The record gives the reactivity of an RNA of 177 nucleotides to 2A3 and DMS.
Conditions: 150 mM KOAc, 10 mM MgCl2 and 150 mM bicine (pH 8.5), 24 C.
Reactivities are given for positions 27 through 126.
RNA sequence: GGGAACGACUCGAGUAGAGUCGAAAACGAGAACCGGGGAGUGCCGGUCUCAGCCUUGACGGCGAUGAGCACGUCGAGCAUGUCACGGUCGCUCUUGUCGGUGGGUGGGUUGGCGAUCCGGCCGUUCGAACUCUAGGCAUUUCGAUGCCUAGAGUUCAAAAGAAACAACAACAACAAC
Reactivity to 2A3 in 0.01 (KOAc 150mM, MgCl2 10mM, bicine 150mM(pH8.5), 24C), signal-to-noise 1, nucleotides 027 to 126: c040g050a000g030a180a010c000c050g020g000g090g070a070g050u130g050c010c000g080g000u000c020u030c000a050g000c000c000u010u100g160a060c000g020g020c050g020a130u290g000a030g000c010a010c210g000u020c040g000a030g000c050a150u190g060u200c080a010c300g060g040u180c130g000c000u000c000u000u070g140u120c060g000g080u170g060g000g140u240g030g000g030u100u110g010g020c040g000a030u040c080c000g100g010c000c030g000u050u070c050
Reactivity to DMS in 0.01 (KOAc 150mM, MgCl2 10mM, bicine 150mM(pH8.5), 24C), signal-to-noise 1, nucleotides 027 to 126: c150g000a170g000a070a110c020c070g040g010g000g000a110g020u010g000c010c000g010g010u000c030u000c050a150g010c160c010u000u040g000a040c040g020g000c030g000a150u020g000a300g010c020a100c040g020u020c040g010a020g000c060a110u020g000u000c100a110c030g010g040u010c110g000c010u010c000u000u000g010u000c040g020g000u000g010g000g020u000g000g000g010u000u000g010g000c020g040a070u030c090c050g010g010c020c000g010u000u010c090
Source: RMDB library OK2TRN, as collected in RNAgym.
DMS (dimethyl sulfate) methylates the pairing face of unpaired adenines and cytosines.